[RMDB]
RNA sequence: GGGAACGACUCGAGUAGAGUCGAAAACACGCAGUCGGGGCGCAGCGCCAGGAUCCGCGCCGUGUCGGUGGUCGCGAGAAUGCCGGUGGCGGUGGUUGUUCCGGCGAGCUCGGCCGCGUCGCGACCAGCCUAUUUACGCGUUCGCGCGUAAAUAGGCAAAAGAAACAACAACAACAAC
Reactivity to DMS in 0.01 (KOAc 150mM, MgCl2 10mM, bicine 150mM(pH8.5), 24C), signal-to-noise 3, nucleotides 027 to 126: c090a070c080g000c090a090g020u000c010g020g010g010g010c070g030c210a130g030c060g030c020c030a110g040g020a050u010c050c080g010c040g000c020c020g020u000g000u000c060g020g020u000g000g010u000c000g000c240g000a130g020a070a090u000g010c010c000g000g010u000g010g020c000g000g030u000g010g030u010u010g010u000u000c020c010g010g040c010g010a080g000c020u000c020g000g010c000c040g000c050g010u010c050g010c020g020a160c000c040a140
Reactivity to 2A3 in 0.01 (KOAc 150mM, MgCl2 10mM, bicine 150mM(pH8.5), 24C), signal-to-noise 3, nucleotides 027 to 126: c010a000c020g000c030a030g010u040c030g010g040g090g050c140g050c120a120g170c010g000c050c020a090g040g030a010u020c030c030g050c010g000c040c010g000u040g030u020c030g030g040u050g030g030u030c020g000c010g030a060g010a090a040u070g000c010c000g090g000u060g150g020c010g010g030u060g110g030u100u100g020u070u000c010c000g010g000c020g020a010g020c010u020c000g000g020c010c010g010c010g010u020c030g000c010g030a020c000c010a020
Chemical mapping of a 177-nucleotide RNA with DMS and 2A3. For 2A3, 5,775 sequencing reads were counted. It was measured as part of the RMDB library OK2TRN. DMS adducts were read by reverse transcription with MarathonRT. The reactions ran in a buffer of 150 mM KOAc, 10 mM MgCl2 and 150 mM bicine (pH 8.5), at 24 C.